Conditions: 150 mM KOAc, 10 mM MgCl2 and 150 mM bicine (pH 8.5), 24 C.
Chemical mapping of a 177-nucleotide RNA with DMS and 2A3.
For DMS, 5,888 sequencing reads were counted.
It was measured as part of the RMDB library OK2TST.
The 2A3 profile rests on 2,453 reads.
RNA sequence: GGGAACGACUCGAGUAGAGUCGAAAAUUUCGCUGUUACGCAUUUUACGGGUGGUAGCGGAAAUGCUGUAGCGCAGUUUAUCUUUGAAAUGGUCAAUUAAACAUCUAACAAGGCUACUUUUGCCAACAUAUAAUGAGCGAUUCGUCGCUCAUUAUAUAAAAGAAACAACAACAACAAC
Reactivity to DMS in 0.01 (KOAc 150mM, MgCl2 10mM, bicine 150mM(pH8.5), 24C), signal-to-noise 5, nucleotides 027 to 126: u000u000u010c040g030c000u010g020u000u010a030c040g010c000a070u000u010u010u020a110c100g010g010g020u000g010g010u000a130g010c010g020g000a010a020a040u000g010c070u010g030u000a020g020c020g020c050a070g010u000u000u010a060u010c060u000u000u010g010a040a100a100u010g010g010u010c080a060a060u010u010a040a070a060c070a050u000c070u010a060a100c140a070a120g000g000c020u000a050c090u000u000u000u000g010c010c030a070a110c200
Reactivity to 2A3 in 0.01 (KOAc 150mM, MgCl2 10mM, bicine 150mM(pH8.5), 24C), signal-to-noise 3, nucleotides 027 to 126: u030u040u040c010g010c020u010g010u050u030a070c090g050c080a080u080u110u030u250a140c050g010g010g000u030g000g030u030a020g040c000g000g000a010a000a020u060g000c050u120g020u080a000g010c020g020c030a010g000u090u050u060a090u050c050u030u100u120g090a070a100a060u140g080g000u030c020a020a040u030u100a120a090a030c030a040u030c040u130a040a030c040a120a010g060g000c000u040a040c000u100u080u120u100g080c000c000a010a030c040